[RMDB]
The record gives the reactivity of an RNA of 177 nucleotides to DMS.

RNA sequence: GGGAACGACUCGAGUAGAGUCGAAAAGAUAUGGAACAUUUGCCGAUAAGCUAUCCUCGGAAACGAGGAUUAGCUUUUGACGGCACCAUUCCUAAGUCAAAGCUAAGACGGUUCGCCGUCUUAGCAAGGCAUUGCGUAUGUUCGCAUACGCAAUGCCAAAAGAAACAACAACAACAAC
Reactivity to DMS in 0.01 (KOAc 150mM, MgCl2 10mM, bicine 150mM(pH8.5), 24C), signal-to-noise 1, nucleotides 027 to 126: g000a020u010a050u000g000g000a070a030c280a240u000u010u000g010c030c010g030a150u000a010a000g010c000u000a040u000c000c000u000c000g010g000a050a070a160c010g000a010g010g000a000u010u010a000g000c000u000u000u010u010g020a220c030g000g020c000a030c130c180a090u010u000c040c000u000a110a160g000u030c060a060a090a080g010c000u000a010a000g010a020c000g000g000u000u000c290g010c000c010g040u000c000u000u000a010g010c010a030a070
Background
Values cover nucleotides 27 to 126. The data come from the RNA Mapping Database (RMDB), library TTRDEL.